[RMDB]
Structure probing data (2A3 and DMS) for a 177-nucleotide construct. The data come from the RNA Mapping Database (RMDB), library M2PK50. Values cover nucleotides 27 to 126.
RNA sequence: GGGAACGACUCGAGUAGAGUCGAAAAGCAAGAUGCUUCGGCAUCUUGCAGUCGUACCGCGAUCGACAGAAUUACAGCUAUGUCGAACGAGGAAGAGCGCGCACAUCAUCCCUUUCGAGGGAUGAAAGUCCUAUCCUUAUUUCGAUAAGGAUAGGACAAAAGAAACAACAACAACAAC
Reactivity to 2A3 in 0.01 (KOAc 150mM, MgCl2 10mM, bicine 150mM(pH8.5), 24C), signal-to-noise 8, nucleotides 027 to 126: g000c000a000a000g000a000u010g000c020u050u130c250g090g000c010a000u000c000u000u000g000c000a000g020u020c020g020u030a040c000c010g020c010g030a040u010c000g000a010c000a010g100a070a030u220u170a220c060a090g090c100u100a040u110g000u010c000g010a020a020c010g010a030g030g020a080a040g050a030g100c060g000c010g020c030a030c010a110u030c000a000u000c010c000c000u020u040u040c210g080a020g000g000g000a000u000g000a010a010a000
Reactivity to DMS in 0.01 (KOAc 150mM, MgCl2 10mM, bicine 150mM(pH8.5), 24C), signal-to-noise 9, nucleotides 027 to 126: g000c000a010a000g000a010u000g010c000u000u010c200g030g010c000a000u000c000u000u000g010c010a030g010u000c030g020u000a150c010c010g000c020g010a070u000c000g000a020c010a020g010a130a160u010u010a120c290a120g010c090u010a120u000g000u000c000g010a010a100c020g000a040g000g000a070a060g000a070g010c040g000c040g000c140a090c180a120u000c000a010u000c000c000c000u010u000u010c150g010a020g010g000g000a000u000g000a010a050a100